Background
This 177-nucleotide RNA was probed chemically with 2A3 and DMS. For 2A3, 7,376 sequencing reads were counted. It was measured as part of the RMDB library M2PK50.
[RMDB]
RNA sequence: GGGAACGACUCGAGUAGAGUCGAAAACAUCCAGUGUUCGCACUGGAUGAGAGGAAUGUGGAUCGCCAAACUACAUACCAAAAGCUGAGCUCGAAAGAGCAACGAUUUCGUCGUUCGCGACGAAAAAUUGAAUUAGUGUGUUCGCACACUAAUUCAAAAAAGAAACAACAACAACAAC
Reactivity to 2A3 in 0.01 (KOAc 150mM, MgCl2 10mM, bicine 150mM(pH8.5), 24C), signal-to-noise 4, nucleotides 027 to 126: c010a000u000c010c000a000g010u010g030u050u090c240g040c080a000c000u000g000g000a010u000g010a030g000a010g000g030a080a030u040g020u040g030g020a100u120c080g100c160c020a040a080a050c020u020a000c010a020u050a060c000c010a100a100a000a000g110c120u110g060a010g020c000u000c000g040a080a050a040g000a010g000c010a020a010c020g040a050u030u020u010c000g000u000c000g010u030u070c240g000c010g080a010c000g000a010a020a010a010a020
Reactivity to DMS in 0.01 (KOAc 150mM, MgCl2 10mM, bicine 150mM(pH8.5), 24C), signal-to-noise 4, nucleotides 027 to 126: c000a020u000c000c000a010g030u010g010u010u010c210g040c020a010c000u000g000g000a000u000g000a110g030a070g010g010a110a030u000g020u010g000g000a050u000c140g020c100c120a070a100a090c010u000a010c020a020u000a100c030c030a080a070a080a140g010c140u000g010a250g010c000u000c000g000a100a070a120g000a010g010c000a040a080c240g000a220u010u000u000c010g000u000c000g010u000u010c180g030c010g000a010c000g010a010a010a020a060a090